[RMDB]
RNA sequence: GGGAACGACUCGAGUAGAGUCGAAAAACGUUGGCAAUUAUGUAUUAUUUUCAGUUUGUUUGCCUUAAUGUCUAAUUUAACUGGUAUCGUCAUCGAUCAUCAACAUAGUUUGUCAGGAAGUGUGUACGGGGAUGAUUACAUUCGUGUAAUCAUCCCCAAAAGAAACAACAACAACAAC
Reactivity to 2A3 in 0.01 (KOAc 150mM, MgCl2 10mM, bicine 150mM(pH8.5), 24C), signal-to-noise 4, nucleotides 027 to 126: a000c060g040u000u000g010g000c010a030a040u030u030a030u040g040u000a150u070u080a130u110u230u130u050c010a020g010u020u100u120g040u010u060u080g020c010c010u030u100a170a100u270g000u040c030u030a000a050u010u230u100a050a060c040u050g080g000u120a040u090c080g300u180c070a180u210c020g100a010u000c030a010u100c030a020a030c000a040u000a030g120u000u010u050g020u020c010a010g080g110a160a090g070u100g080u050g010u160a120c120
Reactivity to DMS in 0.01 (KOAc 150mM, MgCl2 10mM, bicine 150mM(pH8.5), 24C), signal-to-noise 1, nucleotides 027 to 126: a070c020g000u010u000g000g000c020a000a020u040u000a000u000g000u000a110u020u030a170u010u000u030u050c010a000g000u000u000u000g000u000u000u000g030c050c050u020u050a100a020u020g000u000c020u040a040a020u000u000u000a080a020c060u000g020g000u030a000u000c000g010u030c160a110u020c020g000a010u020c170a080u020c070a090a020c000a010u000a040g020u000u030u000g000u030c020a090g000g020a040a100g000u000g000u020g040u030a150c140
This 177-nucleotide RNA was probed chemically with 2A3 and DMS.
The reactions ran in a buffer of 150 mM KOAc, 10 mM MgCl2 and 150 mM bicine (pH 8.5), at 24 C.
DMS adducts were read by reverse transcription with MarathonRT.
For DMS, 1,945 sequencing reads were counted.